[RMDB]
RNA sequence: GGGAACGACUCGAGUAGAGUCGAAAAAUAAAUCGCACAUUAGCACUAUUAUUGCAGAGUUUACAUUCAUUGUCUACGCAUUAUUUUGAAGUGGAACAACCAACAUGUAAAUUCCACUGCUAGCAUAGGACGUAAAUGAGUUCGCUCAUUUACGUCCAAAAGAAACAACAACAACAAC
Reactivity to DMS in 0.01 (KOAc 150mM, MgCl2 10mM, bicine 150mM(pH8.5), 24C), signal-to-noise 2, nucleotides 027 to 126: a020u000a070a080a080u000c090g000c010a090c100a000u000u000a040g000c070a110c050u000a010u040u010a070u020u010g000c040a170g000a050g000u000u000u000a040c070a030u010u030c160a230u000u000g040u000c010u020a020c000g010c040a130u050u040a040u000u000u070u000g000a020a090g000u000g000g000a070a040c010a020a100c120c110a160a120c300a070u000g000u000a000a000a070u000u010c000c070a210c090u000g000c010u000a050g030c150a010u020a030
Reactivity to 2A3 in 0.01 (KOAc 150mM, MgCl2 10mM, bicine 150mM(pH8.5), 24C), signal-to-noise 4, nucleotides 027 to 126: a000u080a000a060a000u210c080g070c030a070c050a130u120u100a070g030c010a000c060u080a030u300u000a080u080u110g000c030a000g010a040g030u000u020u020a010c030a030u000u050c010a050u000u080g040u000c010u000a010c020g010c070a010u030u050a230u150u250u080u120g160a230a050g000u000g010g030a070a010c010a000a000c210c000a020a010c030a110u020g000u030a000a000a010u060u000c050c010a090c040u020g010c000u030a020g000c030a010u090a110
This 177-nucleotide RNA was probed chemically with DMS and 2A3. The reactions ran in a buffer of 150 mM KOAc, 10 mM MgCl2 and 150 mM bicine (pH 8.5), at 24 C. For 2A3, 2,683 sequencing reads were counted.